[RMDB]
An RNA of 207 nucleotides, treated with 2A3 and DMS and read out base by base. The data come from the RNA Mapping Database (RMDB), library OK3TST. Conditions: 150 mM KOAc, 10 mM MgCl2 and 150 mM bicine (pH 8.5), 24 C. For 2A3 the reverse transcriptase was SuperScript II with manganese.
RNA sequence: GGGAACGACUCGAGUAGAGUCGAAAAUGGCAUACACCUGUAGUCCCAGAUACUCACGAGGCUGAGGCAGGAGAAUUGCUUGAACCCACGAGGCAGAGGUUGCAGUGAGCCAAGAUCACACCACUGCAUUCUAGCCUGGGUGACAGAGGAAGACUCCAUCCCAUAUGGGAUUCGUCCCAUAUGGGAUAAAAGAAACAACAACAACAAC
Reactivity to 2A3 in 0.01 (KOAc 150mM, MgCl2 10mM, bicine 150mM(pH8.5), 24C), signal-to-noise 4, nucleotides 027 to 156: u090g030g000c030a050u070a150c040a070c080c010u030g050u110a020g070u040c000c000c000a000g010a070u210a060c030u040c040a030c090g100a080g140g000c110u020g010a040g040g050c050a030g000g030a030g010a060a070u080u060g030c020u020u020g030a020a040c000c010c020a050c090g120a040g000g000c010a020g000a010g090g060u060u030g000c000a010g000u010g030a030g050c060c050a110a060g090a060u190c050a010c010a010c130c000a010c000u010g010c000a020u050u000c010u030a050g000c010c010u000g000g010g010u010g000a020c020a030g090a020g080g040a020a050g020a050c010u060c110c010
Reactivity to DMS in 0.01 (KOAc 150mM, MgCl2 10mM, bicine 150mM(pH8.5), 24C), signal-to-noise 3, nucleotides 027 to 156: u010g040g030c060a160u010a080c060a090c010c000u010g000u000a110g000u000c010c000c000a180g020a120u010a030c030u000c020a070c070g020a120g020g030c000u010g010a050g010g020c040a070g020g010a120g010a090a110u000u000g020c020u000u000g000a090a070c030c000c010a120c060g010a070g020g040c040a110g010a030g020g030u010u000g000c020a020g010u000g020a090g010c000c020a080a200g010a070u010c140a120c030a050c010c010a030c010u020g000c020a040u000u000c010u010a170g030c020c020u000g000g010g010u000g000a130c060a110g000a080g010g010a150a070g000a120c020u010c020c040